[RMDB]
RNA sequence: GGGAACGACUCGAGUAGAGUCGAAAACGACUACGUGAGGAAGGACAGGUUCAGACUUCGCGAGUCCUUUUUGUUUGUGUCUGUCUCGUAAAAACUCGGUGCCAAAACAAAGGGUGGUCCGAUGUGGCGAUAAGAAAUGUUUCGACAUUUUUUAUCGAAAAGAAACAACAACAACAAC
Reactivity to 2A3 in 0.01 (KOAc 150mM, MgCl2 10mM, bicine 150mM(pH8.5), 24C), signal-to-noise 3, nucleotides 027 to 126: c040g030a010c010u170a030c060g030u050g020a010g040g030a070a020g060g010a010c040a060g090g000u080u080c010a020g020a080c010u020u020c080g000c020g040a000g040u030c020c000u020u070u020u040u040g050u000u010u090g020u010g020u000c030u010g020u000c000u000c040g030u050a030a000a000a060a030c020u010c020g000g040u040g000c000c000a060a080a040a030c050a100a160a070g090g020g000u060g010g040u030c000c000g010a030u170g020u050g050g030
Reactivity to DMS in 0.01 (KOAc 150mM, MgCl2 10mM, bicine 150mM(pH8.5), 24C), signal-to-noise 6, nucleotides 027 to 126: c180g000a090c030u010a070c060g000u010g000a050g010g010a070a170g000g000a020c020a100g020g010u030u000c020a030g010a250c040u000u000c060g010c030g000a080g020u010c010c040u000u000u010u010u000g000u000u010u000g010u010g000u000c070u000g000u000c020u000c020g000u020a030a050a070a090a060c060u000c010g000g000u010g000c030c020a030a040a060a090c200a070a090a140g010g000g010u000g000g000u010c000c000g010a030u030g010u000g010g010
Description:
Chemical mapping of a 177-nucleotide RNA with 2A3 and DMS. The data come from the RNA Mapping Database (RMDB), library OK1LIB. 2A3 adducts were read by reverse transcription with SuperScript II with manganese.